[RMDB]
RNA sequence: GGGAACGACUCGAGUAGAGUCGAAAACUUUUUCUUAUCCAACUACUUUUCUGCAGCGCUUGGCAGUUCAAGUGCAGUGAACUUUUUGUCUGUGAUUGGCAACAAUGAUGAUAAUAAUGAUGAAGACUAUUUAAACUACCUUCGGGUAGUUUAAAUAAAAAGAAACAACAACAACAAC
Reactivity to 2A3 in 0.01 (KOAc 150mM, MgCl2 10mM, bicine 150mM(pH8.5), 24C), signal-to-noise 1, nucleotides 027 to 126: c060u010u260u070u170u150c050u030u130a100u040c060c020a030a090c060u150a120c050u020u030u050u080c040u100g000c000a070g060c040g050c130u020u010g060g000c040a130g060u110u110c010a040a000g000u000g060c000a000g030u020g070a080a070c000u100u110u000u100u080g030u020c010u030g090u020g080a080u070u040g000g000c030a000a000c000a060a030u120g020a020u020g000a000u030a120a000u080a060a030u140g100a030u100g030a020a070g040a020c020
Reactivity to DMS in 0.01 (KOAc 150mM, MgCl2 10mM, bicine 150mM(pH8.5), 24C), signal-to-noise 3, nucleotides 027 to 126: c050u010u010u010u010u000c030u010u010a110u010c030c040a070a090c090u010a050c060u010u010u000u000c020u000g040c040a100g010c080g020c050u020u000g010g020c140a100g010u000u000c050a030a040g010u000g030c020a040g010u000g010a040a070c090u000u010u000u000u010g010u000c020u000g040u000g030a050u000u000g000g030c100a050a060c060a030a020u000g020a090u010g000a040u010a030a050u000a060a080u000g000a080u000g000a050a060g010a130c180